An RNA of 177 nucleotides, treated with DMS and 2A3 and read out base by base. Values cover nucleotides 27 to 126.

RNA sequence: GGGAACGACUCGAGUAGAGUCGAAAAUAUAGACCAGCAACGCCGAACCUAAAAGGCUUUUUUCGGCGAUGCCCAACUCGACUUUCUGCCCCGGCGCCAGCGGCUCCGCGCUUGGCACAACAAUGGUAACUAUCGCUCAUUUCGAUGAGCGAUAGUUAAAAGAAACAACAACAACAAC
Reactivity to DMS in 0.01 (KOAc 150mM, MgCl2 10mM, bicine 150mM(pH8.5), 24C), signal-to-noise 1, nucleotides 027 to 126: u090a040u070a080g000a070c090c100a170g030c060a070a080c050g010c000c000g030a010a040c110c050u020a010a050a150a190g020g000c300u000u030u000u010u000u000c070g020g000c030g000a040u010g020c040c030c070a110a050c030u000c030g000a090c070u000u030u010c000u000g000c000c000c000c000g000g030c140g000c010c010a000g000c010g000g000c030u000c040c120g010c010g010c000u000u000g000g080c100a090c140a070a020c180a120a160u000g030g010u000
Reactivity to 2A3 in 0.01 (KOAc 150mM, MgCl2 10mM, bicine 150mM(pH8.5), 24C), signal-to-noise 2, nucleotides 027 to 126: u260a000u090a060g030a030c010c020a000g060c030a030a040c000g000c000c010g040a020a010c000c030u180a160a160a080a040g030g010c060u040u030u020u000u000u000c010g010g000c000g000a020u060g000c000c040c000a040a050c010u010c020g040a030c000u020u060u050c020u080g010c010c010c010c000g030g000c020g000c000c020a030g000c000g030g010c090u040c060c040g040c000g010c010u040u090g010g000c010a000c000a080a030c010a030a170u140g070g030u020